Structure probing data (DMS and 2A3) for a 207-nucleotide construct. The DMS profile rests on 1,804 reads. The reactions ran in a buffer of 150 mM KOAc, 10 mM MgCl2 and 150 mM bicine (pH 8.5), at 24 C. For 2A3, 2,572 sequencing reads were counted.

RNA sequence: GGGAACGACUCGAGUAGAGUCGAAAACACCGUCAGUUCGCUGACGGUGAGCCAAACUUGUAUAGGAUAGAAGUAAUCCAUUGGUCUUAGGAACCAAAAACCUUGGUGCAACUCCAAAUAAAAGUACCAGCGAAGUGACGCCGUUCGCGGCGUCAAAGAGCAGAUGUAAUUUCGAUUACAUCUGCUCAAAAGAAACAACAACAACAAC
Reactivity to DMS in 0.01 (KOAc 150mM, MgCl2 10mM, bicine 150mM(pH8.5), 24C), signal-to-noise 1, nucleotides 027 to 156: c010a000c000c000g120u010c000a000g000u000u000c300g030c000u000g000a020c000g000g040u000g010a010g020c040c070a120a070a050c100u000u030g000u010a070u000a160g000g000a140u010a060g020a110a140g010u000a130a090u000c000c020a150u020u020g010g030u000c010u000u000a170g040g030a110a100c010c030a000a020a040a080a030c050c060u000u000g070g010u000g090c010a090a300c030u020c070c020a070a070a070u010a050a040a170a120g000u000a040c000c070a080g000c100g030a170a030g000u000g010a010c020g000c040c000g000u000u000c300g040c040g020g030c000g060u000c010a000a030a170
Reactivity to 2A3 in 0.01 (KOAc 150mM, MgCl2 10mM, bicine 150mM(pH8.5), 24C), signal-to-noise 5, nucleotides 027 to 156: c000a000c000c000g010u000c010a040g020u040u060c130g030c110u000g000a000c000g000g000u000g000a000g000c000c040a080a120a140c100u160u180g080u140a150u110a180g030g040a030u060a040g230a200a030g090u150a100a000u000c010c000a050u000u030g000g020u000c030u040u160a100g000g110a070a040c010c000a010a010a020a020a110c020c040u040u040g010g010u020g020c040a010a050c050u090c070c060a060a060a090u160a040a110a020a010g050u050a030c030c010a000g030c050g080a080a000g040u030g040a010c000g000c030c020g000u010u070c200g000c000g100g000c000g000u000c010a010a000a000